[RMDB]
RNA sequence: GGGAACGACUCGAGUAGAGUCGAAAAGAUAUGGAGUGUGGAACCAAUACCCAGGUCUUGGACCAAAGCUCGGAAACGAGCUUUGCUAGACCUGGUGUAUUUAAACACACUCCUAAGUCAAAAACAAGACUUGUAGUUUCGACUACAAGUCUUGUAACCAUAGUUACAGUUUCGACUGUAACUAUGGAAAAGAAACAACAACAACAAC
Reactivity to DMS in 0.01 (KOAc 150mM, MgCl2 10mM, bicine 150mM(pH8.5), 24C), signal-to-noise 2, nucleotides 027 to 156: g020a070u000a240u020g020g000a020g040u000g010u010g000g020a080a240c300c270a060a030u020a030c020c000c000a040g010g020u010c000u010u000g030g010a220c300c030a000a020a000g020c000u010c000g000g000a120a100a250c000g020a020g000c000u000u000u010g020c050u000a000g020a010c010c000u000g000g010u010g030u020a000u000u000u010a090a150a220c000a020c000a000c000u000c010c000u000a020a020g020u010c030a050a120a040a140a040c000a000a000g010a020c000u000u000g010u000a030g000u000u010u000c260g040a090c000u000a000c000a000a030g030u000c010u000u000g010u000a010a150
Reactivity to 2A3 in 0.01 (KOAc 150mM, MgCl2 10mM, bicine 150mM(pH8.5), 24C), signal-to-noise 3, nucleotides 027 to 156: g020a020u070a030u140g000g000a010g000u010g000u010g000g050a080a080c040c010a020a010u000a000c000c000c000a000g000g010u000c010u100u210g060g080a100c100c010a010a000a000g000c000u000c010g040g030a080a060a030c010g010a020g000c000u010u010u010g000c000u020a010g000a000c000c000u000g000g000u010g000u000a000u000u000u010a000a000a000c000a000c000a000c000u010c000c000u000a010a000g000u000c020a030a030a010a050a060c000a000a010g000a000c000u010u010g010u010a000g010u010u110u140c290g070a020c000u000a000c000a000a000g000u000c000u000u000g000u000a000a000

The record gives the reactivity of an RNA of 207 nucleotides to DMS and 2A3. For 2A3 the reverse transcriptase was SuperScript II with manganese. The DMS profile rests on 4,130 reads. The reactions ran in a buffer of 150 mM KOAc, 10 mM MgCl2 and 150 mM bicine (pH 8.5), at 24 C. For DMS the reverse transcriptase was MarathonRT. Values cover nucleotides 27 to 156.